Structure probing data (DMS) for a 177-nucleotide construct.
For DMS, 776 sequencing reads were counted.
[RMDB]
RNA sequence: GGGAACGACUCGAGUAGAGUCGAAAAGUUGCGAGAGGCGGCAUGCAAAUGCCGUCCCAGAUGAAUGGCUGCCACGUUCCGGGUCAAACCGGGGCCAUACAGAACCCGGCUUACAGGCCAACUGGCGCAGGCAGAUUAAGUUCGCUUAAUCUGCCUGAAAAGAAACAACAACAACAAC
Reactivity to DMS in 0.01 (KOAc 150mM, MgCl2 10mM, bicine 150mM(pH8.5), 24C), signal-to-noise 2, nucleotides 027 to 126: g010u000u000g000c050g000a210g010a000g000g000c000g000g000c010a000u000g030c300a030a120a010u000g050c000c010g040u000c000c000c010a100g020a110u030g010a120a100u010g010g010c020u010g000c030c060a090c150g000u010u010c040c030g000g020g000u000c270a040a170a070c050c000g000g030g020g000c140c070a030u000a080c160a090g000a110a160c020c030c060g010g000c050u010u010a080c160a120g010g000c050c010a080a050c130u010g000g010c300g010